Conditions: 150 mM KOAc, 10 mM MgCl2 and 150 mM bicine (pH 8.5), 24 C. The record gives the reactivity of an RNA of 177 nucleotides to DMS and 2A3. For DMS the reverse transcriptase was MarathonRT.
[RMDB]
RNA sequence: GGGAACGACUCGAGUAGAGUCGAAAAGGGAGGAACUGAGCUGGGCAUCUUUAGUCAUGGGUGCAGGUUCUGAAGUUGGUGUGCGCUGUCUACACAGCUGUGGCUAUAAGGCAAUGAGGGUAGUUAACCUCAUGUAAGAAUUCGUUCUUACAUGAGGAAAAGAAACAACAACAACAAC
Reactivity to DMS in 0.01 (KOAc 150mM, MgCl2 10mM, bicine 150mM(pH8.5), 24C), signal-to-noise 9, nucleotides 027 to 126: g000g000g010a090g000g000a090a100c090u010g000a060g010c040u000g010g010g020c040a020u000c040u000u010u000a100g010u010c140a070u000g010g010g010u010g010c040a290g000g010u000u010c040u000g010a070a100g010u010u000g010g010u010g010u000g020c080g010c040u000g010u000c110u010a090c140a080c080a050g010c030u000g020u010g010g000c050u000a080u010a070a090g000g010c050a040a060u000g000a070g000g000g010u000a050g000u010u010a080a150
Reactivity to 2A3 in 0.01 (KOAc 150mM, MgCl2 10mM, bicine 150mM(pH8.5), 24C), signal-to-noise 7, nucleotides 027 to 126: g040g000g000a040g010g030a040a050c070u060g010a040g030c010u050g030g230g000c020a020u000c020u060u150u140a120g080u130c080a080u140g030g010g000u020g000c010a000g030g010u060u020c020u060g050a060a020g040u070u090g020g020u050g020u020g030c040g010c030u030g030u030c050u090a040c090a000c000a070g010c030u060g030u070g130g000c010u040a040u040a300a050g030g000c020a020a030u120g010a050g010g030g010u050a050g040u060u100a040a030